[RMDB]
RNA sequence: GGGAACGACUCGAGUAGAGUCGAAAAAGACUGGCCUGUACGCAGGCCAGUCAGGGAGGUGUGAUCCCGUGCUUCCUGGGAGGUGUGAUAUUGUGGUUCCUGGGAGGUGUGAUCCCGUGCUCCCUAACAUGAAUAGCAGGUUCGCCUGCUAUUCAUGAAAAGAAACAACAACAACAAC
Reactivity to DMS in 0.01 (KOAc 150mM, MgCl2 10mM, bicine 150mM(pH8.5), 24C), signal-to-noise 3, nucleotides 027 to 126: a050g000a010c010u010g000g000c010c000u000g010u010a120c270g020c020a010g000g020c000c000a000g010u000c000a000g000g010g000a000g000g010u020g010u020g000a020u000c000c110c180g000u030g010c010u000u000c000c020u000g000g000g010a030g010g010u020g000u000g000a150u040a140u040u020g020u000g020g000u010u000c000c000u000g010g000g000a010g000g020u000g000u020g000a030u000c010c020c040g020u010g000c000u010c000c000c010u000a140a180
Reactivity to 2A3 in 0.01 (KOAc 150mM, MgCl2 10mM, bicine 150mM(pH8.5), 24C), signal-to-noise 8, nucleotides 027 to 126: a000g010a000c000u000g000g000c000c000u020g020u040a020c290g010c060a000g010g000c000c000a000g000u010c000a000g000g000g000a000g000g050u050g010u050g050a020u020c040c020c020g020u110g020c010u010u010c000c000u020g020g030g010a040g150g130u090g020u090g190a170u190a180u300u250g100u130g120g300u080u000c010c010u010g010g000g000a000g010g010u100g040u070g020a010u010c020c010c020g000u100g100c000u000c010c000c000u010a060a030